Background:
The record gives the reactivity of an RNA of 177 nucleotides to DMS. The reactions ran in a buffer of 150 mM KOAc, 10 mM MgCl2 and 150 mM bicine (pH 8.5), at 24 C. The DMS profile rests on 746 reads. The data come from the RNA Mapping Database (RMDB), library OK2TST. Reactivities are given for positions 27 through 126.
RNA sequence: GGGAACGACUCGAGUAGAGUCGAAAAUAAGAACUGGCAAACCCUCCCAACCCUGUACACCUAACCAAGUCCCUUGGCUCCAGGGGUUGCUGAUAACACCAGCUAGCUUACAUCAUGUAGGUACAUCUACGGCUGUUAAUUUCGAUUAACAGCCGUAAAAAGAAACAACAACAACAAC
Reactivity to DMS in 0.01 (KOAc 150mM, MgCl2 10mM, bicine 150mM(pH8.5), 24C), signal-to-noise 1, nucleotides 027 to 126: u030a110a100g000a080a060c050u010g000g010c060a070a080a190c050c020c020u000c060c040c000a130a180c040c000c000u000g000u000a020c130a100c050c050u000a130a070c030c020a000a060g000u010c000c010c010u000u000g000g020c030u000c070c030a110g040g040g000g030u020u000g000c050u010g000a060u010a100a000c130a090c060c020a000g030c090u000a030g040c020u000u010a010c070a190u000c100a100u000g020u000a030g010g010u010a060c120a080u000c110